[RMDB]
RNA sequence: GGGAACGACUCGAGUAGAGUCGAAAAGAAAGAAAGAAAGCGCUGAACCUCGAGAUGGGUUACGGGGCUUAGUCCUUCCUCCGUAUGGCAAUGACUAGAACCGUUACUCAUCUCGAGGUUUCGGUAAUUACGUUAUCGACUUCGGUCGAUAACGUAAAAAAGAAACAACAACAACAAC
Reactivity to 2A3 in 0.01 (KOAc 150mM, MgCl2 10mM, bicine 150mM(pH8.5), 24C), signal-to-noise 3, nucleotides 027 to 126: g100a010a030a000g090a040a100a000g090a050a070a030g150c140g000c030u010g000a000a000c010c000u010c010g000a010g010a000u010g000g000g000u000u030a000c010g010g000g000g010c000u010u000a000g000u000c000c010u020u020c010c010u130c080c080g270u300a170u210g010g020c130a000a000u030g000a000c000u000a000g000a000a010c000c000g000u000u000a000c000u000c010a000u000c000u000c000g010a010g000g000u000u000u000c000g000g000u010a000a000
Reactivity to DMS in 0.01 (KOAc 150mM, MgCl2 10mM, bicine 150mM(pH8.5), 24C), signal-to-noise 4, nucleotides 027 to 126: g010a060a060a070g030a090a070a080g010a090a090a110g010c180g000c000u000g000a010a020c010c010u000c010g000a000g010a010u000g010g010g000u020u000a000c000g000g000g000g000c160u000u000a000g000u000c000c120u000u000c030c020u000c200c190g020u030a080u040g000g010c280a020a020u010g000a000c000u020a010g000a300a250c010c000g000u010u000a040c010u010c000a000u000c000u000c010g000a000g010g000u000u010u000c010g030g020u000a070a090